[RMDB]
RNA sequence: GGGAACGACUCGAGUAGAGUCGAAAAGCCCAAUAUCUUUGUAGGCAACAAGCGCAUCAAUGUGCGCGCCGAAUUCUACAAGUUGGGCCGUAAUUACAGCGCCAAGAUGUUUAUUAAGGCAUUGCAUGAAUUGACCCCGGCCUGCCGAGAUUUAGGCGCAUUGACUUCUAUUCGUAGAAGUCAAUGCAAAAGAAACAACAACAACAAC
Reactivity to DMS in 0.01 (KOAc 150mM, MgCl2 10mM, bicine 150mM(pH8.5), 24C), signal-to-noise 2, nucleotides 027 to 156: g000c000c020c010a030a050u000a040u010c060u010u010u000g000u010a020g020g020c090a170a180c060a050a120g080c000g020c030a060u000c080a110a150u010g050u000g010c020g020c010g000c040c060g020a120a070u000u030c040u010a050c040a040a060g000u000u000g030g060g090c000c000g000u000a110a090u010u000a040c020a080g060c000g010c000c080a010a300g000a040u000g020u000u000u000a010u010u000a050a300g010g030c000a060u000u010g030c030a080u010g000a080a050u000u000g010a100c030c040c000c040g050g020c010c020u010g010c000c020g000a050g010a090u000u010u000a030g010g040c020
Reactivity to 2A3 in 0.01 (KOAc 150mM, MgCl2 10mM, bicine 150mM(pH8.5), 24C), signal-to-noise 2, nucleotides 027 to 156: g040c000c010c030a000a030u120a050u060c050u020u040u010g010u050a010g030g010c020a060a030c040a230a110g020c010g000c030a040u050c090a120a270u300g020u030g040c000g000c010g030c000c030g010a020a000u100u050c000u050a070c000a110a000g060u040u080g030g000g010c040c000g010u020a010a010u050u060a060c030a060g010c030g030c030c020a050a040g090a090u070g070u140u230u120a160u130u170a130a040g000g030c030a020u070u080g040c040a090u080g080a070a070u090u080g060a120c000c000c020c000g040g000c010c010u000g000c000c050g020a030g010a050u040u020u190a070g030g000c040
Chemical mapping of a 207-nucleotide RNA with DMS and 2A3. It was measured as part of the RMDB library OK3TST. The DMS profile rests on 2,533 reads.